[RMDB]
RNA sequence: GGGAACGACUCGAGUAGAGUCGAAAAUUUAACAUACCAAAACCCCAAAUAACAAAACAAACGAAUCCCUAUCUCCUGUAUAUCCCUUCUGUCCUGUCUUCUCUGCUUUGCUGUGGCUGUUGUCUACCAGGGCUGAUGGACAUGAAAUAAUGAACACGUUAUAGCUAUCUUUCGAGAUAGCUAUAACAAAAGAAACAACAACAACAAC
Reactivity to DMS in 0.01 (KOAc 150mM, MgCl2 10mM, bicine 150mM(pH8.5), 24C), signal-to-noise 2, nucleotides 027 to 156: u010u000u010a080a130c040a230u020a230c060c020a100a080a050a140c030c030c000c010a050a070a070u010a090a140c040a080a040a080a080c020a030a040a090c100g000a140a050u000c040c000c010u000a100u000c030u000c030c010u000g020u000a090u000a090u000c010c000c010u000u000c010u030g010u000c000c000u000g010u000c040u000u000c050u000c020u000g030c070u000u000u000g050c010u000g050u000g020g010c000u000g020u010u000g020u000c010u010a130c060c010a050g030g010g030c030u010g020a110u000g010g020a070c010a090u010g010a060a090a160u000a060a190u020g020a110a170c110a070c130
Reactivity to 2A3 in 0.01 (KOAc 150mM, MgCl2 10mM, bicine 150mM(pH8.5), 24C), signal-to-noise 3, nucleotides 027 to 156: u080u080u040a090a060c050a040u200a150c030c070a070a030a020a100c010c040c010c050a020a080a060u170a090a020c080a020a060a020a000c030a030a060a030c060g070a040a030u040c020c000c000u020a080u050c010u000c020c020u020g000u070a080u020a060u130c000c000c010u020u030c040u030g010u030c010c010u010g050u050c010u120u030c060u020c020u010g040c020u040u050u100g010c060u080g030u010g040g000c030u020g030u130u040g020u030c030u030a060c030c000a010g000g010g000c020u030g030a040u070g000g000a000c010a020u130g040a010a040a020u210a030a080u190g090a050a050c070a010c140